[RMDB]
RNA sequence: GGGAACGACUCGAGUAGAGUCGAAAAAGGUAUCGAAAGAUACCAUUACCUGUCGGCGCUGAGGGCAGUGAGAGUGAACACGGAAACCCCCACGGAAGUGAGCUGGAUGACAGGGAUCAGUUUGCAGCCCACCUUGCCAAACAUCCACUCGUCGAAGAAGUAGCGCGAGGCGUCCACCGGGACGCAGCUUUGCUCUUGUUUGUGAAGUUCCUGUUGUAUUGUGUGGAACUGGAGGGGAGGUCAGUCCUCCAUGCAUGUGUGUGUGCCGCAGCAUGUUCGCAUGCUGCAAAAGAAACAACAACAACAAC
Reactivity to DMS in 0.01 (KOAc 150mM, MgCl2 10mM, bicine 150mM(pH8.5), 24C), signal-to-noise 7, nucleotides 027 to 266: a090g010g010u000a000u000c000g000a130a090a180g000a010u000a000c000c010a090u010u010a090c020c010u000g010u000c070g010g020c070g020c050u010g010a120g010g000g010c050a080g020u010g000a110g010a100g020u010g010a090a090c080a080c090g010g010a110a150a210c050c000c000c020c040a080c100g000g000a080a090g010u010g010a060g010c110u010g000g000a070u000g010a080c100a050g010g000g000a060u010c110a070g010u000u000u010g010c060a070g010c040c030c060a120c080c040u000u010g010c080c080a050a060a130c080a060u000c030c020a090c030u000c050g000u010c050g000a060a050g010a050a060g010u010a030g020c050g000c170g010a060g010g010c010g000u000c010c020a170c240c220g000g010g010a020c010g010c010a040g000c030u010u010u010g010c010u000c010u000u000g000u010u000u000g010u010g010a080a120g010u000u000c010c000u000g010u000u000g000u010a120u010u010g010u000g020u010g010g010a030a030c040u000g000g010a090g010g000g010g010a030g020g000u010c060a050g000u000c040c040u000c030c040a030u010g010c050a030u000g020u000g010u000g020u010g010u000g000c110c160
Reactivity to 2A3 in 0.01 (KOAc 150mM, MgCl2 10mM, bicine 150mM(pH8.5), 24C), signal-to-noise 3, nucleotides 027 to 266: a000g000g010u010a000u000c010g060a020a050a050g000a000u000a000c000c000a000u000u100a050c000c010u020g060u050c030g070g030c050g010c020u030g040a100g030g030g000c040a040g060u060g040a100g000a020g020u120g050a090a030c040a010c110g010g050a150a120a040c010c010c000c000c010a030c070g030g020a050a080g010u040g050a020g020c060u050g000g050a020u060g020a060c060a050g040g030g000a080u080c000a020g090u120u130u110g020c030a020g030c000c000c000a030c000c030u050u050g060c030c010a020a110a000c000a050u010c010c000a010c030u040c030g150u100c020g080a060a040g030a050a010g070u130a010g050c010g010c040g050a070g070g000c010g000u010c010c050a170c090c080g130g070g000a000c010g000c000a020g010c010u090u070u110g030c030u040c020u020u090g100u100u060u100g070u070g090a080a020g000u030u020c010c010u020g050u140u030g060u070a150u120u090g030u010g010u060g010g040a040a040c010u010g000g020a050g010g020g000g010a020g000g010u010c010a010g010u030c000c000u000c020c010a010u070g020c010a020u060g030u040g020u010g000u010g030u070g180c000c070
Chemical mapping of a 307-nucleotide RNA with DMS and 2A3. Source: RMDB library POS240, as collected in RNAgym. Reactivities are given for positions 27 through 266. For DMS, 20,672 sequencing reads were counted.